[RMDB]
RNA sequence: GGGAACGACUCGAGUAGAGUCGAAAAAUAUACAAGAACGUUGGGAAAAGCGAUUCGCUUUACGAGUCGCAGAGCACGACGAAUCCAUUCUUGUACUUAAAACCAGAUUUGAUCAGGUAUGGAAUUGUCGUAUCCAAGUUUUCGAACUUGGAUACGAAAAAGAAACAACAACAACAAC
Reactivity to DMS in 0.01 (KOAc 150mM, MgCl2 10mM, bicine 150mM(pH8.5), 24C), signal-to-noise 4, nucleotides 027 to 126: a080u040a240u010a030c030a010a000g010a000a060c030g010u000u000g000g000g020a060a060a130a120g000c000g020a010u000u000c000g010c300u050u020u080a100c060g010a000g000u000c000g010c000a020g010a180g030c060a050c010g010a010c000g010a110a110u010c100c150a300u020u000c000u000u000g000u000a030c150u000u020a040a070a100a090c040c010a100g000a080u020u040u010g020a080u000c030a080g000g020u000a050u020g000g020a110a070u040u010g000
Reactivity to 2A3 in 0.01 (KOAc 150mM, MgCl2 10mM, bicine 150mM(pH8.5), 24C), signal-to-noise 4, nucleotides 027 to 126: a000u180a010u040a010c020a000a030g020a090a020c020g010u040u000g010g020g040a010a120a030a000g000c010g000a020u010u020c030g010c090u130u120u290a100c040g010a000g000u010c010g000c010a000g010a010g000c130a040c050g000a000c020g030a010a070u050c020c010a020u020u000c000u000u000g020u020a070c050u140u170a040a050a030a030c030c000a030g010a260u060u150u200g120a110u120c080a060g050g040u100a050u160g050g120a070a050u070u240g040
Annotation
Chemical mapping of a 177-nucleotide RNA with DMS and 2A3. For 2A3, 1,883 sequencing reads were counted. For DMS the reverse transcriptase was MarathonRT. The reactions ran in a buffer of 150 mM KOAc, 10 mM MgCl2 and 150 mM bicine (pH 8.5), at 24 C. Values cover nucleotides 27 to 126.